[RMDB]
RNA sequence: GGGAACGACUCGAGUAGAGUCGAAAAAGAAAUAGAUGAAGUAGGAGGCUGUUAGCGCUCUAGUGUGUCUUCAGAUAAGAUAUGUCUGGCCUACUUCAUCGGAUACAAAGGACCAACGCUAAAAAAAGAGGCUAUCAAUAUUCGUAUUGAUAGCCUCAAAAGAAACAACAACAACAAC
Reactivity to DMS in 0.01 (KOAc 150mM, MgCl2 10mM, bicine 150mM(pH8.5), 24C), signal-to-noise 1, nucleotides 027 to 126: a130g000a070a070a120u000a160g010a010u000g010a030a000g010u020a000g040g000a180g060g000c050u010g000u000u000a130g000c060g060c150u010c060u030a020g020u000g030u020g010u000c000u000u020c140a070g000a130u020a060a090g000a070u000a020u040g010u010c000u000g000g000c000c000u000a010c000u000u000c010a000u010c000g000g000a060u000a050c130a000a100a100g000g010a160c020c010a070a020c120g000c020u040a000a000a100a170a080a080a150
Chemical mapping of a 177-nucleotide RNA with DMS. Values cover nucleotides 27 to 126. For DMS the reverse transcriptase was MarathonRT.